Conditions: 150 mM KOAc, 10 mM MgCl2 and 150 mM bicine (pH 8.5), 24 C. An RNA of 170 nucleotides, treated with DMS and 2A3 and read out base by base. Source: RMDB library 15KLIB, as collected in RNAgym. For 2A3, 11,152 sequencing reads were counted. The DMS profile rests on 16,401 reads.
[RMDB]
RNA sequence: GGGAACGACUCGAGUAGAGUCGAAAACCGGAGGGAUCCAAGAGACGGAUGACUUUCCCCUAUUGGUUGGGAAAAGUCCCGGAACCAGGAAAUGGGAAAGAGACGGUAGAAAAGAGCGAGCCUCCCACAGGGCUAUGCUUCGGCAUAGCCAAAAGAAACAACAACAACAAC
Reactivity to DMS in 0.01 (KOAc 150mM, MgCl2 10mM, bicine 150mM(pH8.5), 24C), signal-to-noise 6, nucleotides 027 to 129: c050c060g110g010a000g060g040g000a000u020c000c000a100a120g020a140g060a160c000g030g030a110u060g010a060c020u000u030u010c040c010c030c100u030a130u030u010g060g050u100u050g030g060g000a040a070a060a040g020u020c000c040c030g050g030a100a080c070c100a040g030g020a020a100a060u040g010g060g010a020a050a030g020a050g050a030c140g000g000u040a060g000a030a030a070a020g030a000g040c090g020a070g020c070c010u000c000c030c090a070c170a040g050
Reactivity to 2A3 in 0.01 (KOAc 150mM, MgCl2 10mM, bicine 150mM(pH8.5), 24C), signal-to-noise 5, nucleotides 027 to 129: c020c000g000g000a010g000g010g000a020u030c010c040a060a020g020a030g010a030c030g030g000a050u130g010a000c000u000u010u010c000c000c000c000u030a190u190u210g150g020u100u070g000g000g000a020a080a010a050g030u010c000c010c010g010g020a010a020c050c010a010g010g060a030a050a060u080g030g000g000a040a060a020g040a010g010a020c020g000g030u070a040g110a020a080a010a000g030a020g010c020g020a030g010c000c010u000c000c010c000a040c020a020g010